[RMDB]
RNA sequence: GGGAACGACUCGAGUAGAGUCGAAAAUUCUAUUUUGCAAGGAGGUAAACAGCAUGAUAGAACAGUUUCUUAGAGCCCAUAUAUCACAGUCGAAAUUCAAUAAAGCUAGUUCUAAUGCCUCUGAGACCAUCAGUACUCACUUCGGUGAGUACUGAUGAAAAGAAACAACAACAACAAC
Reactivity to DMS in 0.01 (KOAc 150mM, MgCl2 10mM, bicine 150mM(pH8.5), 24C), signal-to-noise 2, nucleotides 027 to 126: u010u010c060u010a010u050u040u030u020g030c060a150a210g050g000a050g000g030u010a030a180a150c190a080g000c010a050u000g000a080u000a000g000a060a030c110a170g000u020u000u000c050u000u000a060g010a050g000c000c000c000a080u040a050u000a130u000c150a110c090a080g030u000c070g020a110a040a060u000u060c190a000a080u010a110a060a010g000c050u000a010g010u020u000c010u000a010a130u020g000c060c010u020c000u000g000a120g000a090c130
Reactivity to 2A3 in 0.01 (KOAc 150mM, MgCl2 10mM, bicine 150mM(pH8.5), 24C), signal-to-noise 3, nucleotides 027 to 126: u010u000c020u030a080u010u090u090u010g020c060a080a080g100g010a040g010g190u220a050a200a110c060a040g040c010a020u090g010a020u000a000g000a020a000c000a080g000u010u030u020c080u060u040a030g040a010g060c000c030c060a050u050a000u020a040u100c110a090c010a030g130u050c050g110a030a120a010u210u100c030a010a100u080a250a050a000g010c010u070a030g070u050u000c020u070a040a090u110g040c000c000u040c020u050g070a060g050a050c010

This 177-nucleotide RNA was probed chemically with DMS and 2A3. The RNA was probed in 150 mM KOAc, 10 mM MgCl2 and 150 mM bicine (pH 8.5) at 24 C. For 2A3 the reverse transcriptase was SuperScript II with manganese.